[RMDB]
RNA sequence: GGGAACGACUCGAGUAGAGUCGAAAAGAGUGGGCAGUCCAACAGGGAGACCGCCCGAAAAUGGGUGGACCUCACUGCGUGGUGGGGACUUGAGAGCAGCUGCCAGGGUGCCACCAGGAGGGCCCCACGCCAGUUGACAGUUCGCUGUCAACUGGCGAAAAGAAACAACAACAACAAC
Reactivity to 2A3 in 0.01 (KOAc 150mM, MgCl2 10mM, bicine 150mM(pH8.5), 24C), signal-to-noise 1, nucleotides 027 to 126: g100a000g030u120g010g030g000c040a020g090u000c000c000a050a050c030a020g060g010g030a040g000a030c000c000g020c010c040c000g030a130a060a030a040u240g000g000g030u030g000g080a090c000c040u040c030a080c020u100g030c030g090u100g020g000u020g000g020g020g040a080c000u070u090g050a120g020a040g120c060a020g120c000u280g020c000c000a010g000g020g030u080g030c030c010a010c000c010a010g070g000a050g000g000g000c030c010c000c000a010
Reactivity to DMS in 0.01 (KOAc 150mM, MgCl2 10mM, bicine 150mM(pH8.5), 24C), signal-to-noise 1, nucleotides 027 to 126: g000a100g060u000g010g010g010c040a210g040u000c030c010a220a300c060a040g020g000g000a020g000a140c020c000g010c000c000c010g000a000a000a080a120u000g000g000g030u000g010g000a120c140c000u000c000a080c000u000g000c090g010u000g000g010u000g030g000g000g010a030c040u010u000g000a090g000a170g020c020a040g030c170u010g000c020c030a210g000g000g020u000g000c020c000a030c010c000a070g000g000a070g020g000g000c030c030c010c020a050